The record gives the reactivity of an RNA of 177 nucleotides to 2A3 and DMS.
[RMDB]
RNA sequence: GGGAACGACUCGAGUAGAGUCGAAAAAUAGCUGACUAAUCGCAGGCAUUAAUUGCACUGAAUGAUUUUGUUUAGAAUCCGUAGUUAUUUCAGCUAAAACUUCAUCGUUUUGCAUCAAUGCUACUGAGACCAUCUUAUACUUCGGUAUAAGAUGGUCAAAAGAAACAACAACAACAAC
Reactivity to 2A3 in 0.01 (KOAc 150mM, MgCl2 10mM, bicine 150mM(pH8.5), 24C), signal-to-noise 3, nucleotides 027 to 126: a000u140a010g070c030u040g000a000c030u020a030a000u030c020g000c010a000g000g030c010a020u030u280a260a180u300u060g000c090a120c300u010g050a060a130u060g020a020u020u040u090u090g050u030u070u110a030g010a050a030u010c020c050g010u010a000g000u030u150a020u040u090u080c030a020g000c050u080a000a010a000a030c050u150u110c030a080u080c060g030u050u010u000u030g030c010a020u040c020a010a090u070g000c010u030a010c020u010g020a000
Reactivity to DMS in 0.01 (KOAc 150mM, MgCl2 10mM, bicine 150mM(pH8.5), 24C), signal-to-noise 3, nucleotides 027 to 126: a110u010a100g000c010u000g000a050c140u000a030a010u000c020g000c010a020g010g000c000a040u000u010a080a140u020u010g010c000a110c050u000g000a070a050u000g000a010u000u000u010u000g010u000u000u010a040g010a090a080u000c020c070g030u010a030g010u000u010a020u000u000u000c140a080g020c010u000a020a020a010a040c020u000u000c300a060u000c180g000u000u000u000u000g010c020a100u010c170a020a030u000g000c020u000a040c040u000g020a300
The 2A3 profile rests on 2,534 reads. The data come from the RNA Mapping Database (RMDB), library OK2TST. The RNA was probed in 150 mM KOAc, 10 mM MgCl2 and 150 mM bicine (pH 8.5) at 24 C.